[RMDB]
RNA sequence: GGGAACGACUCGAGUAGAGUCGAAAACACGUGCGUCCGAUAACAGACAACAGGAAGUUUCUGAAAUCUCUCGUACAUUAAAAGCAUUAGCCCGUGAAUUAGAAUGUCCAGUUAUCGCAUUAAGUCAGGUCCCGGAAUAUUUCGAUAUUCCGGGACCAAAAGAAACAACAACAACAAC
Reactivity to 2A3 in 0.01 (KOAc 150mM, MgCl2 10mM, bicine 150mM(pH8.5), 24C), signal-to-noise 1, nucleotides 027 to 126: c000a000c000g010u130g030c000g010u030c060c090g000a000u000a010a080c080a040g000a000c000a130a000c000a090g160g110a200a130g090u040u040u060c000u000g060a090a130a130u000c060u000c000u000c090g120u290a000c000a000u210u270a230a020a020a010g030c060a090u000u080a000g030c040c030c000g180u000g000a040a180u010u040a040g060a100a040u060g020u000c000c000a000g050u000u090a060u020c000g010c030a060u010u190a150a000g160u060c010a000
Structure probing data (2A3) for a 177-nucleotide construct.
The RNA was probed in 150 mM KOAc, 10 mM MgCl2 and 150 mM bicine (pH 8.5) at 24 C.